[RMDB]
RNA sequence: GGGAACGACUCGAGUAGAGUCGAAAAUGUAAAGCUCUAGACUAUGGGUAUCUUCCUUGCCCCAAGUACCUGCUGUGUGAGAAACCUGGGGAGGGCAGGUGGUGGUUUGAAUGCGGCUGCAGAGGAGACAGCUGAGUGAAGGAGCAAGUACAAAGUGUCAUAGAUGGCAAUUCGUUGCCAUCUAUGAAAAAGAAACAACAACAACAAC
Reactivity to 2A3 in 0.01 (KOAc 150mM, MgCl2 10mM, bicine 150mM(pH8.5), 24C), signal-to-noise 3, nucleotides 027 to 156: u150g000u040a060a010a010g010c010u000c060u090a040g030a080c020u050a070u140g010g000g050u100a090u080c050u060u080c040c010u020u070g090c000c000c000c000a060a050g040u040a100c000c030u040g060c040u060g050u030g030u070g100a080g090a120a090a040c000c060u040g010g000g010g020a040g020g010g000c050a020g020g000u020g000g020u060g000g050u030u080u110g100a060a040u110g040c050g030g000c000u020g000c010a010g020a030g090g020a010g010a010c030a010g000c000u010g010a060g020u090g050a050a020g030g020a010g010c020a000a030g010u010a020c060a060a090a040g080u100g030
Reactivity to DMS in 0.01 (KOAc 150mM, MgCl2 10mM, bicine 150mM(pH8.5), 24C), signal-to-noise 1, nucleotides 027 to 156: u010g000u000a080a120a140g030c030u010c030u000a070g000a130c090u000a110u010g010g010g020u010a090u000c070u000u000c020c030u000u000g040c000c010c000c040a060a190g020u000a090c020c000u010g030c040u000g040u010g000u010g000a120g000a070a120a060c040c030u020g010g010g000g020a130g010g010g040c040a010g020g010u000g050g030u000g010g030u000u000u000g000a060a100u020g020c100g000g030c020u000g020c000a040g000a140g030g010a130g000a030c010a090g000c030u000g010a120g040u000g010a110a100g000g020a020g020c010a030a090g010u010a070c080a050a070a170g010u010g030